[RMDB]
RNA sequence: GGGAACGACUCGAGUAGAGUCGAAAAUGGGGUUUUGCGACCCCUGUGACAGGUCGCUAUUGCUGCGGGGUAAAAACUUUGUGUUUUUUCGAAUUAUUUGAUAUGUGCAGUAUGAGUAUUCCGCGGCGUGUAUUAUUAUUUUCGAAUAAUAAUACACAAAAGAAACAACAACAACAAC
Reactivity to 2A3 in 0.01 (KOAc 150mM, MgCl2 10mM, bicine 150mM(pH8.5), 24C), signal-to-noise 8, nucleotides 027 to 126: u130g010g000g010g030u070u120u130u160g040c040g010a010c000c000c000c040u040g130u040g050a070c050a030g030g050u040c010g010c030u070a060u110u250g010c010u010g000c000g000g000g000g030u040a020a050a030a030a050c040u070u110u050g040u030g060u040u110u010u030u030u090c020g010a080a060u170u080a100u160u230u110g040a050u040a030u120g070u050g010c010a010g020u100a050u060g020a020g030u010a030u020u000c000c000g000c010g000g010c020
Reactivity to DMS in 0.01 (KOAc 150mM, MgCl2 10mM, bicine 150mM(pH8.5), 24C), signal-to-noise 6, nucleotides 027 to 126: u020g000g000g000g010u010u000u000u020g010c140g000a030c010c000c020c020u010g010u020g000a090c170a160g000g000u000c020g020c040u010a070u020u030g020c010u000g010c010g000g000g000g020u010a020a030a040a110a040c030u010u030u020g010u010g010u000u010u000u010u000u010c020g010a070a150u030u020a080u020u010u010g000a060u000a020u010g010u010g010c040a050g000u010a020u010g000a100g000u010a040u010u000c000c000g000c000g010g010c020
About this RNA:
The record gives the reactivity of an RNA of 177 nucleotides to 2A3 and DMS. The reactions ran in a buffer of 150 mM KOAc, 10 mM MgCl2 and 150 mM bicine (pH 8.5), at 24 C. 2A3 adducts were read by reverse transcription with SuperScript II with manganese.